[RMDB]
RNA sequence: GGGAACGACUCGAGUAGAGUCGAAAACCCCAAGUUCGCUUGGGGAAAAAGGGGUCUUGUUCAAGGCUUAGACAUGUUCUGAAGCCUCCACGGAACAACAGCUAAGAACUACCGACAACAAGACGGAGGCACCCAAAAAACCGCAUUCGUGCGGUAAUGAUUUUAUACUCUUCGGAGUAUAAAAUCAAAAAGAAACAACAACAACAAC
Reactivity to DMS in 0.01 (KOAc 150mM, MgCl2 10mM, bicine 150mM(pH8.5), 24C), signal-to-noise 1, nucleotides 027 to 156: c000c000c000c000a000a140g000u000u000c300g050c010u000u000g000g060g000g020a020a010a040a140a080g000g000g030g030u000c000u000u000g000u000u000c040a010a280g020g020c010u020u000a040g020a080c110a220u000g010u000u000c010u010g000a050a090g030c010c000u010c000c050a300c030g000g000a030a020c000a010a100c070a210g010c010u020a130a100g000a070a070c050u000a070c040c000g000a250c070a060a030c030a010a060g020a060c010g030g010a030g040g000c020a140c000c000c020a000a040a080a090a030a160c000c020g000c020a060u020u000c280g030u020g010c000g000g010u030a000a030
Reactivity to 2A3 in 0.01 (KOAc 150mM, MgCl2 10mM, bicine 150mM(pH8.5), 24C), signal-to-noise 3, nucleotides 027 to 156: c020c010c000c000a010a010g030u070u120c190g030c160u020u020g000g000g020g100a050a030a000a020a060g200g000g040g000u000c010u000u000g000u000u030c050a080a020g010g010c030u030u010a010g010a050c050a120u130g000u010u000c000u000g010a070a030g000c000c000u010c000c010a010c000g000g000a000a000c010a020a020c030a070g160c020u060a050a020g040a160a120c110u240a130c180c000g010a000c000a050a000c000a010a000g040a000c010g000g000a000g010g000c000a010c000c010c000a050a120a010a000a050a040c020c060g000c010a020u050u090c180g080u060g010c000g010g000u000a010a010